[RMDB]
RNA sequence: GGGAACGACUCGAGUAGAGUCGAAAAGCAGUAUCUCGUUAGGCGAGGCUCCUAUACAAACACAGGUUGCUGAUCAGACGACGUCGAGAGACGCCCAAGAUUAGGACAGGAUAUAUCGAACCAAGGUGAACCUGUCCAGGGUUCGCCCUGGACAGAAUCAUUACCCAAGAUUCGUCUUGGGUAAUGAAAAAGAAACAACAACAACAAC
Reactivity to DMS in 0.01 (KOAc 150mM, MgCl2 10mM, bicine 150mM(pH8.5), 24C), signal-to-noise 3, nucleotides 027 to 156: g020c050a080g010u000a090u010c030u000c040g010u000u000a080g030g040c020g000a150g010g000c060u000c020c000u010a110u000a150c070a060a090a090c110a080c070a110g030g000u000u000g000c010u000g020a060u000c040a130g030a110c020g010a020c000g000u000c010g010a260g010a300g020a040c010g010c000c010c020a100a210g000a090u000u000a060g010g020a090c040a110g000g010a120u000a090u010a050u010c020g010a080a090c040c020a030a100g010g020u000g000a040a080c060c000u010g010u000c020c030a050g010g010g000u000u000c260g010c000c000c000u000g010g010a010c010a020g000a040a080
Reactivity to 2A3 in 0.01 (KOAc 150mM, MgCl2 10mM, bicine 150mM(pH8.5), 24C), signal-to-noise 6, nucleotides 027 to 156: g020c030a000g030u120a170u070c040u030c020g040u080u170a120g040g070c030g020a040g020g000c030u060c010c020u120a120u070a180c150a060a210a020c090a010c030a080g110g000u070u100g060c010u020g010a020u030c020a030g030a070c040g010a020c010g050u020c000g010a010g000a010g010a090c000g020c010c020c000a030a010g040a030u070u100a010g030g030a030c050a060g040g070a030u060a010u030a040u180c060g040a040a040c020c020a080a020g080g010u050g030a030a040c010c010u000g010u000c000c000a000g000g000g010u040u040c160g100c010c000c000u000g000g010a000c000a010g010a000a030